[RMDB]
RNA sequence: GGGAACGACUCGAGUAGAGUCGAAAAAAACUCAUUAGGCACGCGAAUGCGCUCGCACAAUGAUUCAAUGAUGUUAAGCCCGGUAUGGCAGUGCAAUUUAUGGCUUGGCCAUUCAGAAGGUGGGGUACCUAAAUGACGUCUUCGGACGUCAUUUAGGAAAAGAAACAACAACAACAAC
Reactivity to 2A3 in 0.01 (KOAc 150mM, MgCl2 10mM, bicine 150mM(pH8.5), 24C), signal-to-noise 1, nucleotides 027 to 126: a000a000a000c070u050c040a020u080u130a080g060g010c010a000c020g000c010g110a280a050u290g030c040g000c070u080c100g000c010a090c010a020a070u120g020a010u120u010c040a060a100u150g030a060u120g040u160u050a110a070g000c000c000c050g010g000u120a040u040g030g000c010a010g040u110g090c040a000a000u070u170u000a180u260g040g000c050u050u080g060g000c000c000a040u070u010c040a060g100a190a030g060g060u090g040g010g010g030u010a000
Reactivity to DMS in 0.01 (KOAc 150mM, MgCl2 10mM, bicine 150mM(pH8.5), 24C), signal-to-noise 2, nucleotides 027 to 126: a050a040a040c070u020c020a030u010u000a100g020g020c040a050c060g010c020g010a120a040u020g000c040g030c160u000c190g000c060a100c050a060a050u000g010a060u010u000c140a070a070u000g010a100u000g000u000u010a090a140g000c050c010c040g010g020u000a040u010g000g010c000a020g020u000g030c020a050a090u010u000u000a090u010g000g000c020u010u010g040g050c010c010a020u000u000c080a060g010a060a020g000g030u010g010g000g000g000u010a110